[RMDB]
RNA sequence: GGGAACGACUCGAGUAGAGUCGAAAAAGAUUGCAAUUAGAGUUUACUUGAUUUGGCAAUUAUUAAAAAAUGAACAUUUUUUUCUGUGUCAACAAUGAAGUCAGUUAAAAUGUUUUGUGGAACUAAUAUGCUGAUAGCAAUGCUGCAGAAUUAAAAACUCCUGAUAAAUGUUCGCAUUUAUCAGGAGAAAAGAAACAACAACAACAAC
Reactivity to 2A3 in 0.01 (KOAc 150mM, MgCl2 10mM, bicine 150mM(pH8.5), 24C), signal-to-noise 1, nucleotides 027 to 156: a000g030a020u020u020g000c020a030a110u030u090a150g020a040g120u190u300u210a150c030u030u060g020a080u090u000u130g030g000c010a000a030u040u040a050u090u160a110a070a030a000a000a100u200g030a060a020c020a170u110u000u000u000u000u000u050c020u000g020u020g080u060c050a130a170c020a130a100u130g020a070a020g010u000c000a000g000u000u000a010a090a000a060u050g050u000u070u040u070g080u030g080g000a000a000c000u000a030a090u050a030u160g000c000u000g030a000u060a030g020c000a000a040u040g030c110u000g030c000a000g030a170a000u300u300a030a030a300a000a020